[RMDB]
RNA sequence: GGGAACGACUCGAGUAGAGUCGAAAAAUCCUUCACCAUCGAAAGCGGCGCUAAAGGCCCGGCAGCUGGCAACGUAACUUCUCUGUAAGUUCAAGCCGCUAAGAAUCGAGAAUCCCUGCCUGAUGGCCCUAAUGUUUUAGUUCGCUAAAACAUUAGGAAAAGAAACAACAACAACAAC
Reactivity to DMS in 0.01 (KOAc 150mM, MgCl2 10mM, bicine 150mM(pH8.5), 24C), signal-to-noise 3, nucleotides 027 to 126: a080u000c010c030u000u010c070a110c070c060a060u010c040g010a090a150a090g010c020g000g000c020g020c130u020a080a180a140g020g010c020c020c040g010g010c070a070g010c050u010g030g010c020a090a090c210g000u010a020a020c020u000u000c040u020c200u000g020u040a030a030g010u000u000c040a100a190g020c020c010g020c040u000a040a090g010a090a080u010c090g010a070g010a190a100u000c010c000c000u000g010c040c040u000g000a080u000g000g000c160
Reactivity to 2A3 in 0.01 (KOAc 150mM, MgCl2 10mM, bicine 150mM(pH8.5), 24C), signal-to-noise 3, nucleotides 027 to 126: a000u040c010c000u040u060c060a060c050c000a100u060c010g030a140a070a010g030c030g040g000c000g000c120u150a200a120a160g110g000c020c030c010g080g000c020a030g030c050u110g020g000c020a040a030c040g020u070a020a010c010u050u000c180u010c090u160g190u300a000a030g010u010u010c030a060a030g000c010c000g000c000u020a030a000g050a010a060u070c050g010a000g050a090a030u020c000c020c010u020g040c010c000u130g080a100u120g020g000c000

The record gives the reactivity of an RNA of 177 nucleotides to DMS and 2A3. For 2A3 the reverse transcriptase was SuperScript II with manganese. DMS adducts were read by reverse transcription with MarathonRT. It was measured as part of the RMDB library RFMREP. The 2A3 profile rests on 3,661 reads. The DMS profile rests on 2,457 reads.